[RMDB]
RNA sequence: GGGAACGACUCGAGUAGAGUCGAAAAACCAAGUCUGGGGGCCGAUGAGGGUUGGCUCAAAGUAGGGUUUUGACUUGAAAACUCAAGCUGUGACCCCAAAACGAUGGAGGUAAAUCAGAAUCCUCCUAAAACUAUGGACACUUCGGUGUCCAUAGAACGUCUAUGUAAUGUUCGCAUUACAUAGACGAAAAGAAACAACAACAACAAC
Reactivity to 2A3 in 0.01 (KOAc 150mM, MgCl2 10mM, bicine 150mM(pH8.5), 24C), signal-to-noise 5, nucleotides 027 to 156: a010c020c000a030a010g140u030c040u060g060g020g000g010g000c010c020g060a050u090g090a140g050g160g020u040u050g020g000c010u020c020a050a060a020g050u090a040g010g030g020u020u030u060u060g040a070c010u020u060g060a100a090a080a110c040u010c020a010a020g020c040u060g050u140g140a190c010c000c000c020a050a090a040a040c090g060a080u100g000g000a010g010g000u060a080a130a140u120c010a020g050a040a030u030c000c000u000c000c000u020a030a030a010a010c000u000a000u000g000g000a000c000a000c000u040u080c180g070g010u000g000u000c010c000a000u000a000g000a010a020
Reactivity to DMS in 0.01 (KOAc 150mM, MgCl2 10mM, bicine 150mM(pH8.5), 24C), signal-to-noise 2, nucleotides 027 to 156: a150c010c000a080a240g020u000c020u000g000g030g010g050g040c030c000g010a090u000g020a200g020g000g010u000u000g000g000c040u000c020a000a050a100g010u000a170g000g000g000u000u000u000u000g020a050c020u000u000g000a060a050a130a130c090u000c010a030a080g000c010u000g020u000g000a210c010c000c030c060a050a010a090a070c140g020a130u010g000g010a020g040g020u000a060a060a100u000c100a140g010a200a170u000c000c010u010c000c010u000a040a050a060a120c000u000a000u010g000g010a040c000a020c000u000u010c300g070g010u000g020u000c000c000a000u000a010g020a020a190